[RMDB]
RNA sequence: GGGAACGACUCGAGUAGAGUCGAAAACUUGGGCACUUCGGUGCCCAAGAAACGCUCAACCUCAGAGCGCAAAAGUGGAACGAAUACAGUUCGACAUGAGGAAAACGGACCCGUUCGCGGGUCCGAACUAGUUAUCUAACUUCGGUUAGAUAACUAGAAAAGAAACAACAACAACAAC
Reactivity to 2A3 in 0.01 (KOAc 150mM, MgCl2 10mM, bicine 150mM(pH8.5), 24C), signal-to-noise 3, nucleotides 027 to 126: c000u000u000g000g020g000c010a010c010u030u020c230g100g000u000g010c000c000c000a000a000g000a000a000a000c010g000c000u010c010a080a060c000c010u000c010a000g000a000g000c010g000c060a300a220a010a000g020u030g020g020a030a000c000g050a130a070u300a210c130a070g000u010u010c030g100a000c000a010u010g000a010g020g000a060a000a000a020c000g000g000a000c000c010c000g010u050u060c190g000c000g120g000g000u000c000c000g000a000a000
Reactivity to DMS in 0.01 (KOAc 150mM, MgCl2 10mM, bicine 150mM(pH8.5), 24C), signal-to-noise 3, nucleotides 027 to 126: c000u000u000g000g000g010c000a010c000u010u010c220g050g030u000g010c000c000c000a000a000g000a060a090a210c000g000c000u000c000a050a060c030c000u000c000a020g000a010g000c000g040c070a050a040a020a010g060u000g000g000a010a010c000g010a190a190u010a120c220a090g000u000u000c010g000a020c010a020u000g000a000g000g000a110a070a090a170c010g030g000a000c000c010c000g030u000u010c170g000c020g010g000g010u000c000c000g000a020a080

Source: RMDB library M2PK50, as collected in RNAgym. Structure probing data (2A3 and DMS) for a 177-nucleotide construct. For DMS the reverse transcriptase was MarathonRT. For 2A3 the reverse transcriptase was SuperScript II with manganese. High DMS reactivity at an A or C suggests that its Watson-Crick edge is free. For 2A3, 6,961 sequencing reads were counted.